[RMDB]
Source: RMDB library OK2TST, as collected in RNAgym. Structure probing data (2A3 and DMS) for a 177-nucleotide construct. High 2A3 reactivity points to a flexible backbone, as in loops and unpaired stretches. DMS adducts were read by reverse transcription with MarathonRT.
RNA sequence: GGGAACGACUCGAGUAGAGUCGAAAACUGUUUGGCCUGGACAUGCUGCGACGCUACCAGUGCAACAUCGACCUCAAGACCAACAAGCUGCGCUUCCAUGUGGAGCCUGAAGAGGCGCUGCCAUUCCAGCCUCUGUGCAUUUCGAUGCACAGAGGCUAAAAGAAACAACAACAACAAC
Reactivity to 2A3 in 0.01 (KOAc 150mM, MgCl2 10mM, bicine 150mM(pH8.5), 24C), signal-to-noise 1, nucleotides 027 to 126: c000u000g090u050u080u070g070g000c000c030u040g030g040a100c040a100u090g010c060u050g000c000g050a050c050g030c020u060a030c040c030a030g080u070g120c020a020a020c010a020u060c000g000a130c010c000u000c050a110a050g040a070c010c010a000a050c030a030a020g050c080u010g020c000g010c030u040u060c040c010a090u080g050u120g140g060a020g040c030c000u030g010a080a020g030a020g020g000c000g000c030u020g040c050c000a080u090u000c010c050
Reactivity to DMS in 0.01 (KOAc 150mM, MgCl2 10mM, bicine 150mM(pH8.5), 24C), signal-to-noise 1, nucleotides 027 to 126: c060u000g000u000u020u010g020g000c070c090u000g020g000a130c100a010u000g010c020u000g020c080g020a050c100g040c030u000a140c080c090a030g000u010g000c040a050a030c080a030u000c090g010a080c040c060u000c180a110a090g040a080c060c060a020a050c100a080a110g000c030u000g020c100g000c020u030u000c050c040a150u000g010u000g000g000a130g000c060c010u010g010a130a080g000a090g000g030c020g060c070u010g000c070c140a160u000u020c020c050